Structure probing data (2A3 and DMS) for a 177-nucleotide construct.
[RMDB]
RNA sequence: GGGAACGACUCGAGUAGAGUCGAAAAGUGCCCUGCCUCUGAUGAAGCCUGUGUUGGUAGGGACAUCUGACAGUAAUGAUGAAUGCCAACCGCUCUGAUGGUGGCACAAAAGCCGUGUUCGCACGGCCAACGUAAGUGAGUUCGCUCACUUACGUUGAAAAGAAACAACAACAACAAC
Reactivity to 2A3 in 0.01 (KOAc 150mM, MgCl2 10mM, bicine 150mM(pH8.5), 24C), signal-to-noise 7, nucleotides 027 to 126: g070u090g080c000c000c010u000g010c010c010u040c040u060g050a070u070g080a120a040g030c020c120u130g040u040g030u150u050g030g010u010a020g030g070g040a010c010a010u020c030u070g100a100c070a160g160u290a170a110u180g050a020u030g040a080a030u050g000c000c000a040a050c040c010g030c020u050c040u090g060a070u070g010g140u030g020g000c020a000c020a010a050a000a000g000c000c000g010u010g010u050u090c140g000c090a000c000g000g000c000
Reactivity to DMS in 0.01 (KOAc 150mM, MgCl2 10mM, bicine 150mM(pH8.5), 24C), signal-to-noise 8, nucleotides 027 to 126: g020u010g010c000c010c020u000g000c010c000u000c040u000g010a150u000g000a070a060g020c060c200u010g030u010g030u000u000g000g020u000a040g010g020g010a140c030a010u000c010u000g020a230c190a120g020u010a100a130u010g000a040u000g010a160a100u000g000c010c000a010a030c000c010g010c030u000c060u000g000a140u010g000g020u000g000g000c000a030c170a040a040a080a080g010c000c000g020u000g000u000u020c200g000c020a010c000g010g010c010

2A3 adducts were read by reverse transcription with SuperScript II with manganese. The DMS profile rests on 13,026 reads.